The record gives the reactivity of an RNA of 207 nucleotides to 2A3.
2A3 adducts were read by reverse transcription with SuperScript II with manganese.
Reactivities are given for positions 27 through 156.
The RNA was probed in 150 mM KOAc, 10 mM MgCl2 and 150 mM bicine (pH 8.5) at 24 C.

RNA sequence: GGGAACGACUCGAGUAGAGUCGAAAAUCUAACCUAUGUCCGCCUGGUACGCGAUAAGGUGUCUCGCGGAUGGGAAAGCAUGCCUUGGACGAAGGUGCAUGGCCAUCCGAAACGUACGUACUGUGCCAACCCCAUCCGAAACGUACGUAACAGCGCGAUAUGCAAUUCCGUUCGCGGAAUUGCAUAUAAAAGAAACAACAACAACAAC
Reactivity to 2A3 in 0.01 (KOAc 150mM, MgCl2 10mM, bicine 150mM(pH8.5), 24C), signal-to-noise 2, nucleotides 027 to 156: u100c030u010a040a120c020c010u100a160u200g090u000c050c030g060c010c020u050g030g000u100a030c030g020c040g000a050u070a070a040g070g000u050g080u120c070u040c030g100c010g000g000a030u030g000g000g060a120a070a010g070c050a080u080g020c010c000u070u020g180g030a090c130g130a050a090g040g020u050g050c000a030u030g020g030c000c000a030u090c070c030g000a040a240a060c100g030u100a000c010g030u000a050c080u130g030u160g110c000c020a070a090c010c000c050c000a000u050c000c030g060a100a110a010c030g020u060a000c000g000u030a030a030c040a030g030c080g030c050g170